[RMDB]
Chemical mapping of a 177-nucleotide RNA with DMS. The DMS profile rests on 699 reads. DMS adducts were read by reverse transcription with MarathonRT. Values cover nucleotides 27 to 126. The data come from the RNA Mapping Database (RMDB), library OK2TST.
RNA sequence: GGGAACGACUCGAGUAGAGUCGAAAAGGAAAGGUUCCUCAGAAUUUUACUACUUCAUCCUUAGGUUUAGGGAAAAUUAGUUCUUUACAAAUUCAGGAAACCAAGGUUGCAUGGGAAAUAGGUGAUGCUCGUUACGUCCAUUCGUGGACGUAACGAGAAAAGAAACAACAACAACAAC
Reactivity to DMS in 0.01 (KOAc 150mM, MgCl2 10mM, bicine 150mM(pH8.5), 24C), signal-to-noise 1, nucleotides 027 to 126: g000g010a100a160a150g000g010u010u010c010c000u000c150a190g020a020a030u000u010u000u000a070c030u000a040c110u000u000c190a030u000c000c000u000u000a050g010g010u010u010u010a030g000g000g000a090a070a060a090u000u000a030g000u010u010c260u020u010u030a050c200a010a030a030u020u000c060a120g000g010a040a010a050c010c020a070a050g030g000u000u000g030c050a030u000g000g010g000a010a060a020u020a030g030g000u000g010a070u000g010